[RMDB]
RNA sequence: GGGAACGACUCGAGUAGAGUCGAAAAGCACACCACAGUGCCUGCUAUCACGGCAUUAUCGCCAGCGGUGCUGCCGUGAUGCGGUCUUCGCAAGGACCGCAACAUGAAGGUACGAUGCUUUUGUGUCGUUAUUGUUUUUGUUCGCAAAAACAAUAACAAAAGAAACAACAACAACAAC
Reactivity to DMS in 0.01 (KOAc 150mM, MgCl2 10mM, bicine 150mM(pH8.5), 24C), signal-to-noise 9, nucleotides 027 to 126: g010c020a040c090a150c140c080a120c170a200g030u000g010c000c010u000g000c030u000a130u000c020a020c020g000g000c000a020u000u000a010u000c020g020c120c210a210g020c040g030g020u000g010c120u000g000c030c000g000u000g000a010u000g010c010g000g000u000c010u000u000c300g020c300a160a130g000g000a010c000c000g020c000a060a030c160a070u000g000a060a030g010g010u000a020c000g010a100u010g010c050u000u000u000u000g020u010g010u010c140
Reactivity to 2A3 in 0.01 (KOAc 150mM, MgCl2 10mM, bicine 150mM(pH8.5), 24C), signal-to-noise 8, nucleotides 027 to 126: g020c000a030c010a020c060c020a050c050a060g000u000g000c000c000u030g030c020u060a010u050c010a000c010g010g000c000a010u020u030a030u050c020g040c080c070a100g170c030g040g000u010g000c000u000g000c000c000g010u010g000a010u030g000c010g000g000u020c010u140u110c120g090c160a100a090g020g000a000c000c000g010c010a010a030c070a080u100g050a040a010g000g000u020a010c030g030a080u040g000c020u040u040u050u070g110u020g050u060c080
Description:
Conditions: 150 mM KOAc, 10 mM MgCl2 and 150 mM bicine (pH 8.5), 24 C. This 177-nucleotide RNA was probed chemically with DMS and 2A3. 2A3 adducts were read by reverse transcription with SuperScript II with manganese. For 2A3, 25,087 sequencing reads were counted. 2A3 is a SHAPE reagent: it acylates the 2'-hydroxyl of flexible nucleotides of all four kinds. For DMS the reverse transcriptase was MarathonRT.